[RMDB]
The record gives the reactivity of an RNA of 177 nucleotides to 2A3 and DMS. For DMS, 1,393 sequencing reads were counted. 2A3 adducts were read by reverse transcription with SuperScript II with manganese. DMS adducts were read by reverse transcription with MarathonRT. It was measured as part of the RMDB library M2PK50. Values are in units of 0.01, from 0 to 300, in steps of 10.
RNA sequence: GGGAACGACUCGAGUAGAGUCGAAAAGAUGGAGACUUCGGUCUCCAUCAAAACAGGACGUGGAGCCGGCUUCGCGGCGCACGACGAAGACGCCCGGGCCGGAAAUCCUUAGGUUCGCCUAAGGAAAGUGAUGUAUACUGUUCGCAGUAUACAUCACAAAAGAAACAACAACAACAAC
Reactivity to 2A3 in 0.01 (KOAc 150mM, MgCl2 10mM, bicine 150mM(pH8.5), 24C), signal-to-noise 1, nucleotides 027 to 126: g000a010u000g000g010a010g000a020c020u070u050c250g020g020u000c000u000c000c000a020u000c000a000a000a020a020c030a030g110g050a030c040g090u070g040g110a040g090c010c020g050g000c020u300u300c070g030c160g000g000c010g000c030a060c040g200a040c110g140a210a030g080a080c020g030c050c010c030g010g030g000c000c020g000g000a000a030a010u000c000c000u000u000a010g050g010u020u060c210g050c040c000u010a000a000g020g000a040a010a040
Reactivity to DMS in 0.01 (KOAc 150mM, MgCl2 10mM, bicine 150mM(pH8.5), 24C), signal-to-noise 2, nucleotides 027 to 126: g000a020u000g010g000a020g010a020c000u000u030c210g020g010u000c010u000c000c010a010u000c010a020a060a030a180c070a090g000g000a100c130g020u010g010g000a140g030c010c000g010g000c010u000u000c010g020c160g040g010c000g000c050a060c090g010a090c220g010a150a210g010a180c030g010c000c000c020g020g000g010c000c030g010g000a030a050a060u000c000c000u000u000a000g000g020u020u010c300g010c000c000u000a000a000g020g000a000a050a090